[RMDB]
RNA sequence: GGGAACGACUCGAGUAGAGUCGAAAAAUAGUAUACCAGGGCGAGAGAUGAAAUGCCAAGACCCCUGGUGGACUGAGCGAGGCGAAGGCGAUGUUCUUGUAGGCAUUCGGUGAUCAAGGACGAAGGCGAUAACCUAUUACUUCGGUAAUAGGUUAUCAAAAGAAACAACAACAACAAC
Reactivity to 2A3 in 0.01 (KOAc 150mM, MgCl2 10mM, bicine 150mM(pH8.5), 24C), signal-to-noise 3, nucleotides 027 to 126: a000u170a000g030u020a010u020a030c000c000a000g000g000g000c050g010a140g010a000g000a160u110g100a090a090a110u200g030c030c000a000a020g050a050c000c000c000c000u000g000g010u000g010g000a020c020u050g030a010g040c040g020a010g020g030c040g030a040a020g050g010c020g040a050u100g010u050u030c000u010u030g060u020a030g060g000c010a030u050u050c040g090g040u090g020a040u050c030a050a030g030g010a030c020g020a050a020g080g020c060
Reactivity to DMS in 0.01 (KOAc 150mM, MgCl2 10mM, bicine 150mM(pH8.5), 24C), signal-to-noise 5, nucleotides 027 to 126: a070u000a040g010u000a070u000a060c010c010a010g000g010g020c070g020a180g000a080g010a090u010g020a070a050a070u010g010c020c020a120a110g000a260c300c000c000c000u000g010g010u000g000g010a030c020u000g000a090g020c060g010a070g010g010c040g000a050a050g000g010c050g000a060u010g000u000u000c030u000u000g000u000a080g000g010c030a050u010u020c070g000g010u000g010a090u000c050a050a060g000g000a040c040g010a070a100g000g020c200
Notes: Conditions: 150 mM KOAc, 10 mM MgCl2 and 150 mM bicine (pH 8.5), 24 C. The record gives the reactivity of an RNA of 177 nucleotides to 2A3 and DMS. For DMS, 5,094 sequencing reads were counted. For 2A3, 3,624 sequencing reads were counted.